[RMDB]
RNA sequence: GGGAACGACUCGAGUAGAGUCGAAAAGCGUAACGGCUGGGUGUAACCCAACUCUAGGUGUGCUGAUUAGCGGGCUUGACCCCGUAACAAAUAGGCACUGGUGGUAAAAAGCAUCCCACCUACUCACAAAGCUCCAAAUUCUUCGGAAUUUGGAGAACUGUUCGAAUAGGUUCGCCUAUUCGAACAGAAAAGAAACAACAACAACAAC
Reactivity to DMS in 0.01 (KOAc 150mM, MgCl2 10mM, bicine 150mM(pH8.5), 24C), signal-to-noise 1, nucleotides 027 to 156: g020c070g000u000a080a160c160g010g050c020u000g000g030g000u000g010u000a020a300c030c020c000a020a030c020u000c060u020a050g000g030u000g020u010g010c040u000g000a110u000u010a190g020c060g000g000g040c060u010u020g000a090c080c000c000c010g040u000a050a150c140a040a030a130u000a100g010g020c040a050c010u000g000g040u020g000g040u000a010a080a040a100a210g000c090a160u010c000c000c000a120c020c030u000a040c020u000c070a080c020a040a100a220g020c010u000c010c000a000a010a000u000u000c000u000u000c300g060g000a070a010u000u000u010g020g000a000g000a020a070
Reactivity to 2A3 in 0.01 (KOAc 150mM, MgCl2 10mM, bicine 150mM(pH8.5), 24C), signal-to-noise 3, nucleotides 027 to 156: g010c000g000u030a050a040c070g090g010c060u020g020g000g010u060g030u060a110a110c020c000c010a050a060c050u090c060u120a070g090g000u050g020u030g090c020u040g040a130u070u010a030g010c000g020g030g000c020u120u210g060a250c000c000c010c010g010u010a030a000c000a010a160a080u150a040g040g000c000a000c020u000g000g040u020g000g020u050a130a070a010a090a040g050c010a030u080c030c010c000a010c000c000u040a050c070u070c060a100c050a030a160a030g050c000u020c000c000a000a000a020u000u000c000u020u050c150g040g010a000a000u000u000u000g000g000a000g000a000a010
This 207-nucleotide RNA was probed chemically with DMS and 2A3. In probing experiments dimethyl sulfate is read out at A N1 and C N3, which are open when not base-paired. For DMS the reverse transcriptase was MarathonRT.